Source: RMDB library 15KREP, as collected in RNAgym. This 177-nucleotide RNA was probed chemically with DMS and 2A3. For 2A3 the reverse transcriptase was SuperScript II with manganese. For DMS the reverse transcriptase was MarathonRT.
RNA sequence: GGGAACGACUCGAGUAGAGUCGAAAAGGGGGAACCGGAUUUACCUACGGGAAUCCCUGGGUUCCUCUGAUGUCCAGUCCCUCUCCCGUCCGAGUGAAGGGAGACUCCGGAACUCCAGUCAUUUGAGCCUCAAUUUAAACUUCGGUUUAAAUUGAGGAAAAGAAACAACAACAACAAC
Reactivity to DMS in 0.01 (KOAc 150mM, MgCl2 10mM, bicine 150mM(pH8.5), 24C), signal-to-noise 2, nucleotides 027 to 126: g010g000g000g000g000a050a020c010c000g000g000a040u000u000u000a100c030c040u010a100c210g020g020g010a070a020u000c000c000c300u010g050g000g030u000u000c000c020u000c010u000g000a070u000g000u010c040c090a130g010u000c020c030c010u000c000u010c000c010c010g000u000c070c010g020a100g020u050g010a090a020g000g020g000a010g000a030c060u000c090c080g000g000a070a130c030u000c010c030a030g020u000c030a100u000u000u000g010a200g000
Reactivity to 2A3 in 0.01 (KOAc 150mM, MgCl2 10mM, bicine 150mM(pH8.5), 24C), signal-to-noise 1, nucleotides 027 to 126: g000g000g010g010g000a000a030c010c000g000g010a000u010u040u180a130c010c010u060a020c140g040g000g000a010a030u050c020c000c050u020g090g030g000u010u000c030c000u010c010u020g050a040u100g100u050c050c020a040g040u010c050c000c000u000c000u000c020c000c000g030u060c010c020g130a060g030u160g040a030a010g010g020g010a000g000a000c040u040c060c060g050g030a070a020c000u000c010c000a050g100u040c010a060u000u060u270g020a040g060